[RMDB]
RNA sequence: GGGAACGACUCGAGUAGAGUCGAAAAGAAUAAGGAAUGAGUUUCCUCACAAGGUGGUGAGUUCCUCAUCUCUGAAUGGGAGCCACUUGGCAGGAAUAUUGUGGUAGCAUUUCAAGCAAUGGACAGGAAACUGCUAUACGUGACCUCGGAGAGCUCACAGGGGAUAAUUAUUCGUAAUUAUCCCCUGAAAAGAAACAACAACAACAAC
Reactivity to DMS in 0.01 (KOAc 150mM, MgCl2 10mM, bicine 150mM(pH8.5), 24C), signal-to-noise 3, nucleotides 027 to 156: g020a110a140u010a060a080g010g020a070a030u010g000a220g020u000u000u000c040c010u000c090a150c090a080a150g010g010u010g000g020u000g010a130g020u000u010c060c020u000c030a080u000c050u010c060u020g010a110a090u010g020g010g000a160g000c000c010a020c030u000u000g010g050c070a050g000g000a100a110u000a160u000u000g030u000g020g000u000a100g010c050a130u000u000u000c060a090a180g040c090a080a100u010g000g020a170c030a120g040g000a120a080a160c050u010g020c010u010a110u000a100c110g050u010g010a120c020c030u000c040g000g000a100g000a110g010c040u010c030a170
Reactivity to 2A3 in 0.01 (KOAc 150mM, MgCl2 10mM, bicine 150mM(pH8.5), 24C), signal-to-noise 4, nucleotides 027 to 156: g030a040a020u180a070a090g070g040a070a060u060g020a030g060u040u090u060c010c020u030c010a080c030a050a110g100g030u070g010g020u020g060a090g040u070u060c020c030u080c020a070u020c070u010c060u100g100a210a040u070g000g030g010a020g040c020c000a020c030u050u030g030g010c040a010g010g080a070a100u060a040u080u070g030u050g100g040u050a040g070c030a040u020u120u160c110a090a010g040c030a060a070u100g060g020a050c020a020g100g000a020a040a040c030u020g000c000u040a040u000a130c050g010u040g040a030c000c020u010c010g020g010a040g010a000g020c010u010c010a020